[RMDB]
RNA sequence: GGGAACGACUCGAGUAGAGUCGAAAAGCUCUGGAAUUGAGGCCCCUCUCACAAUAAUCCAAAACUACUUCGCAGAGUAAUCUGCCGAAUCGUAGGAUGCCCAUUACUAUCUAUUUUUGGAGCAUCUAAAACUGUCAGUGCUUCGGCACUGACAGAAUCGCAGAAAUAUCUUCGGAUAUUUCUGCGAAAAAGAAACAACAACAACAAC
Reactivity to 2A3 in 0.01 (KOAc 150mM, MgCl2 10mM, bicine 150mM(pH8.5), 24C), signal-to-noise 1, nucleotides 027 to 156: g000c000u010c020u030g040g050a100a040u110u010g050a050g060g000c000c000c010c050u090c030u040c020a170c010a090a100u240a110a040u090c010c060a050a070a050a110c040u010a000c000u050u050c000g000c010a000g020a000g060u120a150a100u020c000u010g050c080c030g010a000a030u060c050g000u010a040g030g040a000u000g000c000c030c000a020u030u030a080c080u080a130u250c050u090a260u180u040u000u000u020g010g000a080g030c000a000u030c000u030a000a000a090a170c000u010g000u010c000a000g000u000g000c000u020u030c150g040g000c000a000c000u000g000a010c000a000g000a010a040
Record summary:
The record gives the reactivity of an RNA of 207 nucleotides to 2A3. Conditions: 150 mM KOAc, 10 mM MgCl2 and 150 mM bicine (pH 8.5), 24 C. Source: RMDB library M2RFOK, as collected in RNAgym.